[RMDB]
RNA sequence: GGGAACGACUCGAGUAGAGUCGAAAACCAGGGUUCUUGGUGUGGGUUCCGUCUCACACUUCACACCCUCAAAGUAGCCUUCCUGCAGUUUUGUCUGCAGGUUGUGUGGAAAGUCUGUUCCGUCAGAUUUUCGUACCUGUUUCGACAGGUACGAAAAAAAAGAAACAACAACAACAAC
Reactivity to DMS in 0.01 (KOAc 150mM, MgCl2 10mM, bicine 150mM(pH8.5), 24C), signal-to-noise 3, nucleotides 027 to 126: c010c000a080g000g000g000u000u000c010u000u010g000g030u000g010u000g010g000g010u000u080c300c180g030u060c030u000c000a010c010a000c000u010u030c010a010c170a000c010c010c000u000c150a040a060a090g000u030a260g010c010c010u020u000c000c000u000g010c000a020g010u000u040u030u030g000u030c000u000g000c030a000g000g000u000u000g000u030g020u000g010g000a120a040a040g020u010c020u030g020u000u020c060c020g010u020c050a020g000a130
Reactivity to 2A3 in 0.01 (KOAc 150mM, MgCl2 10mM, bicine 150mM(pH8.5), 24C), signal-to-noise 3, nucleotides 027 to 126: c000c000a000g030g000g000u020u010c000u000u010g020g000u020g000u000g020g010g010u210u300c060c020g180u020c020u010c010a000c000a000c040u150u100c000a120c000a010c000c020c010u040c010a020a070a000g080u040a010g000c010c000u000u000c000c000u000g000c020a020g010u050u040u280u300g100u090c000u010g000c000a000g000g020u010u000g000u010g000u010g090g080a090a080a030g010u030c060u100g050u130u220c080c060g130u160c060a050g010a040
This 177-nucleotide RNA was probed chemically with DMS and 2A3. Conditions: 150 mM KOAc, 10 mM MgCl2 and 150 mM bicine (pH 8.5), 24 C. High 2A3 reactivity points to a flexible backbone, as in loops and unpaired stretches. In probing experiments dimethyl sulfate is read out at A N1 and C N3, which are open when not base-paired. The 2A3 profile rests on 1,500 reads. Values cover nucleotides 27 to 126. Source: RMDB libraries RFM100 and RFMREP, as collected in RNAgym.